[RMDB]
Chemical mapping of a 177-nucleotide RNA with DMS. Conditions: 150 mM KOAc, 10 mM MgCl2 and 150 mM bicine (pH 8.5), 24 C.
RNA sequence: GGGAACGACUCGAGUAGAGUCGAAAAGGAGCAGGAGCUCCAAGGUGUACGGAAGGGAGGAGCCUCUCGGCCUGCGCAUGUCAAUCGACGGAACCACCGUCUUCAUCCCCACUGUGUACGAUCCGUCGGAUCCCCUGAGAUUCGUCUCAGGGGAUCCAAAAGAAACAACAACAACAAC
Reactivity to DMS in 0.01 (KOAc 150mM, MgCl2 10mM, bicine 150mM(pH8.5), 24C), signal-to-noise 1, nucleotides 027 to 126: g010g010a000g010c040a170g050g000a150g000c020u000c010c000a120a030g020g030u000g040u000a040c170g020g000a050a020g010g000g000a060g030g000a190g000c180c000u000c040u000c040g000g010c040c060u020g020c000g020c080a070u000g010u000c040a070a120u010c190g020a000c010g020g010a060a120c150c090a080c130c020g010u000c010u010u010c160a210u000c000c010c020c080a100c150u010g010u000g030u000a090c060g000a090u000c010c000g000u010c140